[RMDB]
RNA sequence: GGGAACGACUCGAGUAGAGUCGAAAACUUAGUAGAGGUUUAUGGGCAAAGUCCUGGAUCUCCCACUCAAUGAAAGCCUAACAAUGGAUGGUGCUAUUUGUGAAUCCAGCAUCCAUGCACCUUGCCCCUCUUCCUAGGAUUUCGAUCCUAGGAAGAGAAAAGAAACAACAACAACAAC
Reactivity to 2A3 in 0.01 (KOAc 150mM, MgCl2 10mM, bicine 150mM(pH8.5), 24C), signal-to-noise 3, nucleotides 027 to 126: c020u070u070a030g030u090a080g140a050g080g050u040u050u090a070u100g030g000g000c070a140a150a040g030u060c010c010u000g020g040a030u020c030u060c040c000c010a050c000u070c030a040a090u110g090a140a030a010g040c010c010u060a100a050c040a090a160u160g020g050a050u090g030g080u060g030c030u030a080u120u090u080g120u030g050a080a030u010c020c020a020g030c020a010u050c000c020a000u050g000c040a030c000c000u010u040g010c000c000c010
Reactivity to DMS in 0.01 (KOAc 150mM, MgCl2 10mM, bicine 150mM(pH8.5), 24C), signal-to-noise 3, nucleotides 027 to 126: c080u000u010a100g020u000a140g000a070g010g010u000u000u000a060u010g010g000g020c110a060a070a110g000u000c050c050u010g010g000a040u000c110u010c030c040c030a150c100u000c040a060a050u010g010a090a070a150g010c020c040u000a100a120c140a070a060u000g000g000a060u020g010g000u000g030c050u010a120u010u000u010g000u010g010a100a080u010c220c080a040g000c090a040u010c000c010a010u000g000c120a010c030c010u000u000g000c020c000c040